[RMDB]
RNA sequence: GGGAACGACUCGAGUAGAGUCGAAAAAAGUAUGUGGACAUGCCUAAAGGAGAGUCAGAAUUGCUUUACAUGGCUAAGGAUGGAUAUUGCUAUCUGAACAUAUAUCUCGCCAUGUUGGUUAAUAUCAUAGUCUCUGUUGGUUCGCCAACAGAGACUAAAAAGAAACAACAACAACAAC
Reactivity to DMS in 0.01 (KOAc 150mM, MgCl2 10mM, bicine 150mM(pH8.5), 24C), signal-to-noise 2, nucleotides 027 to 126: a020a080g010u000a040u020g010u000g020g010a030c070a080u000g030c090c020u010a050a050a100g010g010a140g000a060g020u000c080a050g000a100a070u000u010g010c000u010u000u010a070c040a020u000g000g000c000u010a090a190g000g000a070u000g000g000a080u020a080u000u010g020c090u000a040u020c160u030g000a110a080c110a010u000a020u000a100u000c050u000c170g010c010c020a010u000g020u000u000g020g010u000u000a010a010u000a030u010c120a140
This 177-nucleotide RNA was probed chemically with DMS. Reactivities are given for positions 27 through 126. DMS adducts were read by reverse transcription with MarathonRT.